[RMDB]
Structure probing data (DMS and 2A3) for a 177-nucleotide construct. The RNA was probed in 150 mM KOAc, 10 mM MgCl2 and 150 mM bicine (pH 8.5) at 24 C. The DMS profile rests on 2,533 reads. Source: RMDB library TTRDES, as collected in RNAgym. Reactivities are given for positions 27 through 126.

RNA sequence: GGGAACGACUCGAGUAGAGUCGAAAAGAUAUGGACGUAGGUGAACUACGCUCUCGUCGGAAACGACGAGGGAGGCGCACCAGCGUCCUAAGUCAAAUCCAUGUUCACGUUCGCGUGAACAUGGAAACAAGGUUUAACGGUUCGCCGUUAAACCUUGAAAAGAAACAACAACAACAAC
Reactivity to DMS in 0.01 (KOAc 150mM, MgCl2 10mM, bicine 150mM(pH8.5), 24C), signal-to-noise 3, nucleotides 027 to 126: g000a030u000a260u020g000g000a010c010g050u000a130g010g030u000g000a140a110c300u010a270c140g040c000u010c000u000c000g020u010c000g000g000a060a070a150c000g000a010c010g000a020g000g000g000a080g010g040c300g010c000a000c010c000a300g030c020g000u000c000c000u000a000a090g000u000c010a130a130a160u000c000c000a000u000g010u000u010c000a000c000g000u000u010c230g010c020g010u000g000a000a000c000a010u010g000g000a000a040a120
Reactivity to 2A3 in 0.01 (KOAc 150mM, MgCl2 10mM, bicine 150mM(pH8.5), 24C), signal-to-noise 2, nucleotides 027 to 126: g000a010u020a020u080g000g000a000c030g010u080a230g010g020u050g030a300a250c160u300a180c300g040c030u140c000u000c030g000u000c010g010g040a040a010a010c020g000a000c020g010a010g020g000g020a100g060g160c140g000c000a000c020c030a010g000c000g000u020c010c010u010a030a010g020u000c040a000a060a220u020c000c000a010u010g000u010u010c000a000c020g010u050u100c300g040c000g150u000g000a010a000c000a010u010g000g000a020a000a000